RNA sequence: GGGAACGACUCGAGUAGAGUCGAAAAAGCCAUACCAUUACGAUGGUAUGGCAAGUCCGUGACGGCGAUGGAUCCCGCCUGGCCGAUGCCGAACUGCCGAUCUGGCUGAUGGUUCCUGCCCCUUCAAAAAACGUAAAGCACUUCGGUGCUUUACGAAUCUUAUCAAAUACUUCGGUAUUUGAUAAGAAAAAGAAACAACAACAACAAC
Reactivity to 2A3 in 0.01 (KOAc 150mM, MgCl2 10mM, bicine 150mM(pH8.5), 24C), signal-to-noise 4, nucleotides 027 to 156: a010g010c000c000a000u000a000c000c000a020u060u050a060c240g120a020u010g000g000u000a000u000g000g000c000a000a010g020u000c010c020g050u070g090a090c050g000g020c030g020a040u080g000g010a020u040c020c000c010g000c020c030u030g010g010c030c050g100a060u200g030c020c010g050a070a040c050u070g020c010c010g100a200u110c080u140g020g000c010u020g020a050u050g020g000u000u020c000c000u020g010c000c000c000c010u080u130c080a090a080a030a030a000a040c000g000u000a000a000a000g000c000a000c020u040u090c210g070g000u000g000c000u010u000u000a000c000g000a000a000
Reactivity to DMS in 0.01 (KOAc 150mM, MgCl2 10mM, bicine 150mM(pH8.5), 24C), signal-to-noise 2, nucleotides 027 to 156: a180g000c010c000a020u000a000c000c000a040u000u000a130c260g020a150u000g020g010u000a000u010g010g020c000a000a010g020u000c050c020g000u000g020a120c040g000g020c050g000a140u010g000g010a050u000c020c020c030g000c040c010u000g000g020c050c090g010a160u020g000c030c000g020a080a100c050u000g000c060c020g020a130u000c060u000g000g030c010u000g000a130u000g000g010u000u000c040c030u000g020c010c000c020c030u020u030c040a000a050a090a120a170a180c010g000u000a000a010a020g010c010a010c000u000u010c300g050g020u000g000c000u000u000u010a010c010g000a030a020